[RMDB]
RNA sequence: GGGAACGACUCGAGUAGAGUCGAAAACCUGGUUUAGGGUUCCAGGCUACCCCUAUCUAUCGGUCGAGAUGCGAGCGCUUAAGCUCAAAUUGAGUGGCUGAGUUAGUGGUGAACGUAUCCCUAUGUUAAAACGGUAGCUGCUUCGGCAGCUACCGAACAAUAUGUUUACCUUCGGGUAAACAUAUUGAAAAGAAACAACAACAACAAC
Reactivity to 2A3 in 0.01 (KOAc 150mM, MgCl2 10mM, bicine 150mM(pH8.5), 24C), signal-to-noise 4, nucleotides 027 to 156: c000c000u010g020g000u030u050u060a030g000g000g000u060u020c010c010a000g010g000c010u050a030c000c000c010c000u010a020u010c010u020a160u060c010g020g030u000c030g030a030g000a140u010g010c010g020a010g000c070g040c200u280u300a150a100g000c010u000c000a000a040a020u020u010g020a030g030u260g040g000c000u000g000a000g010u010u010a010g000u020g070g010u060g030a120a020c060g040u070a120u120c010c010c000u020a070u080g080u030u120a060a130a020a020c010g000g000u000a000g000c000u010g010c010u040u080c160g080g000c000a000g010c000u000a000c000c000g000a000a000
Reactivity to DMS in 0.01 (KOAc 150mM, MgCl2 10mM, bicine 150mM(pH8.5), 24C), signal-to-noise 3, nucleotides 027 to 156: c000c000u000g010g030u000u000u000a070g030g030g000u010u000c020c010a080g040g020c010u000a080c010c000c020c010u000a060u000c050u010a070u000c010g060g000u000c030g000a300g020a050u000g020c300g000a050g050c000g050c300u020u010a120a170g040c000u020c010a030a240a050u000u010g000a230g060u000g000g050c020u010g020a080g020u000u000a050g010u000g010g010u000g000a090a090c080g010u000a120u000c000c000c020u000a170u000g000u000u000a080a070a100a220c020g020g010u000a020g000c010u010g010c000u000u010c270g060g030c000a000g020c010u000a000c000c000g020a010a060